[RMDB]
RNA sequence: GGGAACGACUCGAGUAGAGUCGAAAAGCGGAAUACUCGCCGGCCGUCGAGGGGCGCGGCAACCUGCUCCUCACCAAAGCAGCUAAGGGAGAAGAAUAAUGGCGGACCUCACGAAAACGGCAAACGGCGCGGACCUCGCGGCAACGAUCGGCGGCAAACAUACGUCAAGAUUCGUCUUGACGUAUGUAAAAGAAACAACAACAACAAC
Reactivity to 2A3 in 0.01 (KOAc 150mM, MgCl2 10mM, bicine 150mM(pH8.5), 24C), signal-to-noise 4, nucleotides 027 to 156: g070c030g040g070a090a030u090a130c020u030c120g010c010c000g030g000c010c010g080u200c130g000a000g000g010g030g150c010g010c000g050g000c000a010a040c000c020u020g020c000u030c020c000u060c010a100c000c040a020a130a020g070c050a000g030c090u140a060a120g010g020g020a040g020a070a010g070a040a060u140a140a030u110g070g000c030g000g050a080c030c010u080c050a050c060g070a090a080a030a010c030g030g020c000a010a060a070c030g050g000c000g000c000g010g030a030c000c000u020c010g020c000g000g000c010a030a060c080g080a100u100c000g010g000c000g010g000c020a050a100
Reactivity to DMS in 0.01 (KOAc 150mM, MgCl2 10mM, bicine 150mM(pH8.5), 24C), signal-to-noise 1, nucleotides 027 to 156: g030c010g030g010a100a140u000a080c030u000c010g050c000c030g030g030c000c000g020u040c050g000a020g030g050g040g010c000g000c080g000g080c070a040a040c010c000u000g020c020u000c020c020u010c030a080c090c090a060a090a160g040c090a060g030c090u000a190a270g030g000g030a100g000a030a150g010a090a130u010a040a100u010g020g010c020g030g000a110c020c020u000c000a120c020g000a050a040a100a080c050g000g000c070a060a080a110c030g010g000c000g010c000g000g020a100c000c010u010c050g000c080g000g000c020a030a040c030g000a000u010c010g010g060c030g050g000c080a060a060
Overview:
Chemical mapping of a 207-nucleotide RNA with 2A3 and DMS. The RNA was probed in 150 mM KOAc, 10 mM MgCl2 and 150 mM bicine (pH 8.5) at 24 C. 2A3 adducts were read by reverse transcription with SuperScript II with manganese. Reactivities are given for positions 27 through 156. For 2A3, 2,567 sequencing reads were counted.